[RMDB]
RNA sequence: GGGAACGACUCGAGUAGAGUCGAAAAGCCUGCAGUCGUUGAUUUAAGAAGGUCUAAAACUUUUUUUUGCCAUUUUAUCAACGCCGAUGGCAUGUUUGACCGUGAAUCUGAUGCAGCCACACAUCAACUACGGUAAUUUAUUCGUAAAUUACCGUAGAAAAGAAACAACAACAACAAC
Reactivity to DMS in 0.01 (KOAc 150mM, MgCl2 10mM, bicine 150mM(pH8.5), 24C), signal-to-noise 7, nucleotides 027 to 126: g020c160c010u010g010c100a150g020u000c010g000u010u000g000a030u000u000u000a050a070g010a110a120g010g010u000c060u010a040a030a030a100c150u020u010u000u000u000u000u000u000g000c010c000a090u000u000u000u010a090u000c070a030a050c130g010c130c110g000a080u000g010g010c010a030u000g000u000u000u000g010a100c020c020g000u010g010a040a050u000c050u000g000a050u000g000c020a060g000c040c070a070c100a090c060a050u010c080a060a190
Reactivity to 2A3 in 0.01 (KOAc 150mM, MgCl2 10mM, bicine 150mM(pH8.5), 24C), signal-to-noise 5, nucleotides 027 to 126: g030c010c000u020g060c060a060g110u070c020g040u070u040g020a050u060u060u050a110a110g060a130a060g040g010u040c090u170a040a040a090a160c070u300u130u060u020u010u010u070u070g000c000c000a040u020u050u030u070a120u090c020a060a060c060g010c030c030g030a020u020g010g010c010a010u050g050u020u060u090g060a030c010c010g010u050g050a040a050u030c040u050g020a020u020g020c010a030g030c030c000a060c010a010c000a090u080c010a020a090
Background
Chemical mapping of a 177-nucleotide RNA with DMS and 2A3. 2A3 is a SHAPE reagent: it acylates the 2'-hydroxyl of flexible nucleotides of all four kinds. The DMS profile rests on 9,841 reads. It was measured as part of the RMDB library OK2TST. Conditions: 150 mM KOAc, 10 mM MgCl2 and 150 mM bicine (pH 8.5), 24 C. Values are in units of 0.01, from 0 to 300, in steps of 10. For 2A3 the reverse transcriptase was SuperScript II with manganese.